RNA sequence: GGGAACGACUCGAGUAGAGUCGAAAAGUACGACAACUUAUUACGCAUCGUCGUACGAUGGAUGCUAAGAUUAGUGGCGAAAGCCACAAGCACGGGAAUUCAUAAGUCAGAUCCGAGAGGAUUUGACGUCCUAGCCUGUGCAAGACUAGGUCAGACAAGUAUUAUAGUGAUUCGUCACUAUAAUACUAAAAGAAACAACAACAACAAC
Reactivity to 2A3 in 0.01 (KOAc 150mM, MgCl2 10mM, bicine 150mM(pH8.5), 24C), signal-to-noise 9, nucleotides 027 to 156: g030u030a020c020g020a000c030a090a040c090u140u150a100u240u160a190c140g050c070a070u080c070g010u000c010g030u050a030c050g010a010u060g110g020a020u050g030c020u050a040a030g020a210u100u190a040g010u000g000g000c010g040a100a030a010g000c000c000a000c010a000a010g000c000a000c010g010g000g050a030a060u160u110c050a050u140a210a060g000u000c000a000g000a010u000c000c000g030a040g010a020g030g000a000u000u010u000g000a000c000g000u010c000c010u030a060g010c000c000u020g010u020g010c030a030a000g030a020c050u080a030g060g030u060c030a020g030a120c040a090
Reactivity to DMS in 0.01 (KOAc 150mM, MgCl2 10mM, bicine 150mM(pH8.5), 24C), signal-to-noise 6, nucleotides 027 to 156: g010u000a000c020g030a030c020a080a060c050u000u010a200u010u000a130c250g040c120a110u000c140g010u000c010g020u000a020c030g020a090u000g010g000a120u000g010c050u000a110a100g010a150u000u010a120g030u000g020g010c000g010a150a130a280g020c000c000a010c000a040a080g010c010a050c040g020g010g010a090a130u000u000c040a070u000a050a070g010u000c000a020g000a000u000c010c000g010a300g000a300g020g000a010u000u000u000g010a010c010g010u010c020c020u000a090g020c000c000u000g000u000g020c100a100a040g000a060c060u000a050g020g000u000c040a170g010a120c120a090
An RNA of 207 nucleotides, treated with 2A3 and DMS and read out base by base. The 2A3 profile rests on 12,116 reads. Conditions: 150 mM KOAc, 10 mM MgCl2 and 150 mM bicine (pH 8.5), 24 C.